RNA sequence: GGGAACGACUCGAGUAGAGUCGAAAAUUCAAAAGCAAGUGACUUUCUGAUGACCUUCCUAGCAGUAAUUGUAGAGGAAGCCUAAUCACAUUAUUUUUGAAUAGCAGAAGUUACAGAAUAAUAUAAAAGUGGUAUUGUUAUUCGUAACAAUACCACUAAAAGAAACAACAACAACAAC
Reactivity to DMS in 0.01 (KOAc 150mM, MgCl2 10mM, bicine 150mM(pH8.5), 24C), signal-to-noise 2, nucleotides 027 to 126: u000u010c040a090a070a120a090g000c190a100a150g040u000g000a040c040u000u000u020c030u020g000a150u000g020a140c210c000u000u010c000c010u000a240g000c010a020g000u010a090a100u010u000g020u010a090g040a070g020g000a010a030g010c100c030u010a060a070u000c020a060c130a080u010u000a090u010u000u010u010u010g000a060a090u000a050g000c050a050g000a040a040g000u010u000a020c010a140g010a070a110u020a070a070u010a090u020a060a070a070
Reactivity to 2A3 in 0.01 (KOAc 150mM, MgCl2 10mM, bicine 150mM(pH8.5), 24C), signal-to-noise 2, nucleotides 027 to 126: u070u040c030a040a020a060a040g030c090a150a000g030u020g060a000c000u140u300u180c010u020g120a140u170g080a170c000c000u000u000c000c000u060a030g020c000a010g050u300a300a210u300u060g020u030a090g020a030g220g040a000a020g040c000c020u070a030a020u090c030a000c020a100u080u220a210u070u260u010u070u050g010a030a000u020a030g010c000a000g000a040a010g020u050u010a010c010a000g090a040a090u280a150a090u200a060u020a250a030a000